[RMDB]
RNA sequence: GGGAACGACUCGAGUAGAGUCGAAAAUCAUCAGCAAGGAGUUACCGUCUUGGUUGCGCAGAUUAGCGUCGACACCAUGAUCGAUGUACUGGGCGAGGGUUUCUGUAUCGCCACGACGUGCCAUGUCCCGUGUUUGCUAGUUCGCUAGCAAACACGGAAAAGAAACAACAACAACAAC
Reactivity to DMS in 0.01 (KOAc 150mM, MgCl2 10mM, bicine 150mM(pH8.5), 24C), signal-to-noise 1, nucleotides 027 to 126: u000c040a080u020c100a030g020c110a060a070g020g010a120g000u000u000a090c130c050g000u000c030u020u000g030g000u020u020g000c080g020c070a070g010a150u000u000a110g000c050g010u000c010g020a030c030a100c140c040a160u010g010a120u000c060g000a110u000g020u000a040c150u000g010g000g000c020g010a060g000g010g000u000u000u010c020u010g030u000a060u000c050g000c020c030a050c070g020a040c010g010u020g040c020c050a070u010g000u000c090
Reactivity to 2A3 in 0.01 (KOAc 150mM, MgCl2 10mM, bicine 150mM(pH8.5), 24C), signal-to-noise 1, nucleotides 027 to 126: u040c000a000u050c000a000g100c060a080a090g000g000a040g070u130u090a080c000c010g000u030c030u050u000g020g020u040u100g000c020g000c020a000g010a200u100u070a050g060c070g150u010c040g060a030c010a020c060c180a090u150g070a190u150c050g000a030u050g040u120a090c070u070g080g000g000c030g010a040g060g050g050u000u040u020c020u050g060u040a040u050c030g000c000c010a010c010g020a010c010g010u030g020c000c000a040u020g050u020c040